This 207-nucleotide RNA was probed chemically with 2A3. 2A3 adducts were read by reverse transcription with SuperScript II with manganese. The RNA was probed in 150 mM KOAc, 10 mM MgCl2 and 150 mM bicine (pH 8.5) at 24 C. The 2A3 profile rests on 505 reads. Values cover nucleotides 27 to 156.
RNA sequence: GGGAACGACUCGAGUAGAGUCGAAAACGGAAAAACCGCGCUCCGCCAUAUCCGACUGGACGAGUCGCUGGCAGCAAUCCGUUCAUACUGAUGCUCAAUGCCGAAGUCAACGCCCGGAUUGACGUAAGCGCCGCCGACGUGCUGGAAGCGCACCGGGGGCGGGACCGAUGUUCGCAUCGGUCCCGCCAAAAGAAACAACAACAACAAC
Reactivity to 2A3 in 0.01 (KOAc 150mM, MgCl2 10mM, bicine 150mM(pH8.5), 24C), signal-to-noise 1, nucleotides 027 to 156: c010g020g090a040a000a050a040a070c020c020g000c000g000c000u010c000c020g000c010c000a040u030a130u190c050c090g190a160c110u200g020g000a060c050g000a070g010u130c000g010c130u100g010g010c000a050g040c010a000a050u010c000c010g000u020u040c010a030u120a250c010u120g030a060u130g000c030u070c110a070a250u200g020c010c000g090a070a030g010u000c020a020a000c070g010c040c010c010g010g030a030u000u000g010a010c010g060u010a010a050g000c010g000c010c000g040c050c000g090a140c070g010u050g010c000u090g030g110a100a000g000c000g000c000a000c000c000g000g000g000